This 177-nucleotide RNA was probed chemically with 2A3.
Conditions: 150 mM KOAc, 10 mM MgCl2 and 150 mM bicine (pH 8.5), 24 C.
Reactivities are given for positions 27 through 126.
The data come from the RNA Mapping Database (RMDB), library RFM100.
RNA sequence: GGGAACGACUCGAGUAGAGUCGAAAAUCACAAUCUUAAAAUUUUUUCCAUCUUCGAGGAUUCUAGCCAAGUAUCUCUUUUGUGUGUGUUUAACGUAUACAAUAUAAUGGAAUAGAUUUUAUAGACUGCUAUAGCGUUCUUUCGAGAACGCUAUAGCAAAAGAAACAACAACAACAAC
Reactivity to 2A3 in 0.01 (KOAc 150mM, MgCl2 10mM, bicine 150mM(pH8.5), 24C), signal-to-noise 2, nucleotides 027 to 126: u120c000a000c000a070a130u010c010u020u030a040a010a000a040u000u010u000u060u000u000c010c000a020u060c080u300u250c070g090a000g090g030a040u030u000c050u100a060g030c070c030a120a030g030u000a040u010c040u000c010u050u040u100u010g050u000g010u000g020u000g090u000u090u190a150a080c040g010u030a010u000a020c000a040a000u120a010u120a200a010u030g000g000a040a000u000a050g000a000u000u000u050u000a150u040a020g050a030c030u020